[RMDB]
Conditions: 150 mM KOAc, 10 mM MgCl2 and 150 mM bicine (pH 8.5), 24 C.
Chemical mapping of a 177-nucleotide RNA with DMS and 2A3.
For DMS, 8,287 sequencing reads were counted.
High DMS reactivity at an A or C suggests that its Watson-Crick edge is free.
Values cover nucleotides 27 to 126.
RNA sequence: GGGAACGACUCGAGUAGAGUCGAAAAGGGUUAGCGUUCGCGCUAACCCCAGGAUCGAACAUGUCAAAUCUCGCAGACAUGAAAGGAUCAAAAGCGAGAAAACUAGACAGUCAUUCGUGACUGUCAAAUAAUUCAGAUUGUUCGCAAUCUGAAUUAUAAAAGAAACAACAACAACAAC
Reactivity to DMS in 0.01 (KOAc 150mM, MgCl2 10mM, bicine 150mM(pH8.5), 24C), signal-to-noise 7, nucleotides 027 to 126: g010g000g010u000u000a010g010c000g030u000u010c200g030c010g030c000u000a000a000c000c000c000c050a040g000g010a120u010c080g010a110a300c010a010u000g000u000c010a030a080a070u000c000u000c000g020c010a100g000a010c010a010u000g000a050a120a110g010g000a080u010c140a030a030a100a100g000c000g010a020g010a020a120a100a110c170u000a120g000a000c000a010g000u000c000a040u000u010c200g010u000g010a020c000u000g000u000c000a020a070
Reactivity to 2A3 in 0.01 (KOAc 150mM, MgCl2 10mM, bicine 150mM(pH8.5), 24C), signal-to-noise 6, nucleotides 027 to 126: g010g000g000u000u010a010g010c020g010u040u030c250g000c000g000c090u010a000a000c010c000c000c000a040g060g070a090u130c070g060a050a040c010a020u010g000u010c020a030a070a250u020c020u000c010g000c020a010g010a020c000a010u010g020a070a040a010g110g010a030u140c060a030a060a000a030g010c010g000a010g000a030a040a010a040c080u060a070g000a010c010a000g010u000c000a000u030u130c200g070u040g010a000c000u000g000u000c000a000a010